Chemical mapping of a 177-nucleotide RNA with 2A3 and DMS. The reactions ran in a buffer of 150 mM KOAc, 10 mM MgCl2 and 150 mM bicine (pH 8.5), at 24 C. For 2A3, 2,288 sequencing reads were counted.
[RMDB]
RNA sequence: GGGAACGACUCGAGUAGAGUCGAAAAGCUUUGAAAGAGGCGGUCUUUAACCUCAGUCAGGCCGAUGAUGAUAUCAGUGUGGAAGAAGCGCGUGCAGAGAUUGCCAAGAUUGAAGCCUUGAAGAAUGCAGUGGGUAGUAGUUCGCUACUACCCACUGAAAAGAAACAACAACAACAAC
Reactivity to 2A3 in 0.01 (KOAc 150mM, MgCl2 10mM, bicine 150mM(pH8.5), 24C), signal-to-noise 3, nucleotides 027 to 126: g000c010u050u040u100g130a100a080a060g080a060g010g010c000g000g040u030c040u050u140u060a110a070c000c020u010c020a040g060u060c040a020g050g010c030c060g030a040u050g030a030u030g040a040u020a040u180c090a060g040u050g040u130g150g050a130a080g050a090a030g070c040g020c070g060u030g010c040a000g000a020g000a140u000u050g030c010c010a090a040g010a090u050u100g060a070a000g000c020c000u040u060g040a080a050g020a070a090u200g030
Reactivity to DMS in 0.01 (KOAc 150mM, MgCl2 10mM, bicine 150mM(pH8.5), 24C), signal-to-noise 3, nucleotides 027 to 126: g020c040u030u040u010g030a030a050a080g000a120g030g030c040g030g000u000c030u040u020u010a090a110c100c020u010c030a070g030u010c090a060g000g000c020c020g000a070u010g010a130u030g000a070u010a180u000c020a090g010u030g030u030g030g020a020a060g010a120a080g020c030g000c090g020u010g020c030a070g000a040g010a060u020u020g000c050c040a040a080g000a110u000u000g000a080a060g040c060c040u000u010g000a100a050g000a110a080u030g010